RNA sequence: GGGAACGACUCGAGUAGAGUCGAAAAUACAAGUACGAAAGUACAAGCCUUAUCAGUUGGGCCUUCUGGUCAAAUUAGCGCUCACCCAGGAGGUCCUUCGCAUGAGGUCGACAAGCGGUAAAAGAAAGCAACUCUACCUAUUCGUAGGUAGAGUUGCAAAAGAAACAACAACAACAAC
Reactivity to DMS in 0.01 (KOAc 150mM, MgCl2 10mM, bicine 150mM(pH8.5), 24C), signal-to-noise 1, nucleotides 027 to 126: u030a120c130a080a110g020u010a000c020g000a110a140a250g000u000a010c010a180a300g000c000c000u000u010a010u000c110a200g030u000u010g010g010g000c000c000u000u000c020u000g000g010u010c100a020a070a080u040u000a080g000c070g000c030u000c080a170c300c010c000a000g030g000a020g000g030u000c000c000u030u000c030g010c300a040u000g030a000g010g000u000c090g030a130c080a100a050g000c120g030g000u030a050a040a040a170g000a060a070a000